[RMDB]
RNA sequence: GGGAACGACUCGAGUAGAGUCGAAAACGCUGGGCUGAACGCUUAACUUCGUUGAAACACUGAAGCGCGCACGGUGUGGAGAAGUACAGCGCAUGAGCCUGUGCUGAAGCGCGCACGGCAACCGAAAGGUGCGUUAAAGACGCGUUCGCGCGUCUAAUAAGUGUGUUUGUUUCGACAAACACACUUAAAAAGAAACAACAACAACAAC
Reactivity to DMS in 0.01 (KOAc 150mM, MgCl2 10mM, bicine 150mM(pH8.5), 24C), signal-to-noise 2, nucleotides 027 to 156: c010g020c020u000g000g000g010c000u030g010a080a030c030g030c010u010u010a230a060c030u010u000c000g030u000u010g010a300a200a030c020a030c010u000g020a050a050g030c020g060c020g030c000a300c000g020g020u010g000u000g010g000a050g010a030a050g000u000a100c210a060g010c010g040c090a160u000g010a120g020c010c010u020g010u000g050c020u000g010a040a090g020c010g020c040g050c010a220c010g020g010c020a130a150c030c000g010a080a080a130g020g010u000g010c000g030u000u000a070a070a100g010a020c020g020c020g020u010u010c150g050c010g030c000g000u000c000u010a080a120
Reactivity to 2A3 in 0.01 (KOAc 150mM, MgCl2 10mM, bicine 150mM(pH8.5), 24C), signal-to-noise 3, nucleotides 027 to 156: c030g010c030u050g010g020g020c080u180g120a290a020c040g010c000u050u060a120a070c000u000u020c040g300u300u020g000a010a000a000c000a000c020u030g030a150a010g000c000g010c000g000c020a040c020g010g010u000g000u000g000g000a010g010a010a000g000u040a040c060a070g000c000g040c060a110u300g030a030g030c000c010u000g010u020g000c000u010g010a100a010g000c020g000c000g000c010a000c000g020g000c010a020a030c020c010g050a040a020a010g000g010u030g000c000g010u020u060a100a080a000g020a000c000g030c000g020u050u080c040g000c010g020c000g060u010c000u000a020a140

The record gives the reactivity of an RNA of 207 nucleotides to DMS and 2A3. 2A3 adducts were read by reverse transcription with SuperScript II with manganese. It was measured as part of the RMDB library RNAMAK. Reactivities are given for positions 27 through 156. The DMS profile rests on 3,947 reads. For 2A3, 2,881 sequencing reads were counted.